This 177-nucleotide RNA was probed chemically with DMS and 2A3. DMS adducts were read by reverse transcription with MarathonRT. The data come from the RNA Mapping Database (RMDB), libraries RFM100 and RFMREP. Values are in units of 0.01, from 0 to 300, in steps of 10. The reactions ran in a buffer of 150 mM KOAc, 10 mM MgCl2 and 150 mM bicine (pH 8.5), at 24 C.
[RMDB]
RNA sequence: GGGAACGACUCGAGUAGAGUCGAAAACAAUAUCCUUAUUAAUGGAUUAUGUAAGAUUAAAAUGGUUGAUGAAGCCUUGAAUCUCUUCACAGAAAUGCAUUGCAAACCCAAUACAGUAUCUUACAACGACCAUUUAUGCUUUCGAGCAUAAAUGGUCAAAAGAAACAACAACAACAAC
Reactivity to DMS in 0.01 (KOAc 150mM, MgCl2 10mM, bicine 150mM(pH8.5), 24C), signal-to-noise 2, nucleotides 027 to 126: c040a090a120u010a060u010c010c000u030u020a220u020u010a100a080u000g000g000a050u020u000a040u010g000u000a020a000g030a020u000u020a010a070a080a090u010g000g000u000u000g000a020u010g000a120a230g070c000c030u000u020g000a120a070u000c030u000c000u010u000c140a090c220a040g010a060a050a060u000g000c020a000u000u000g040c050a060a050a060c250c140c040a050a050u010a070c080a110g000u030a030u010c040u000u000a050c020a010a100c230
Reactivity to 2A3 in 0.01 (KOAc 150mM, MgCl2 10mM, bicine 150mM(pH8.5), 24C), signal-to-noise 4, nucleotides 027 to 126: c030a010a060u050a020u110c000c010u060u110a170u180u180a210a160u300g010g020a020u060u040a050u090g010u020a010a010g000a030u110u230a070a060a040a140u060g010g000u000u060g060a120u080g040a080a000g000c020c000u020u040g070a070a070u020c020u020c000u140u170c040a040c020a030g050a020a050a010u080g020c040a040u080u080g000c000a020a040a070c020c000c000a010a000u080a040c030a030g040u070a030u010c000u010u010a010c010a030a060c110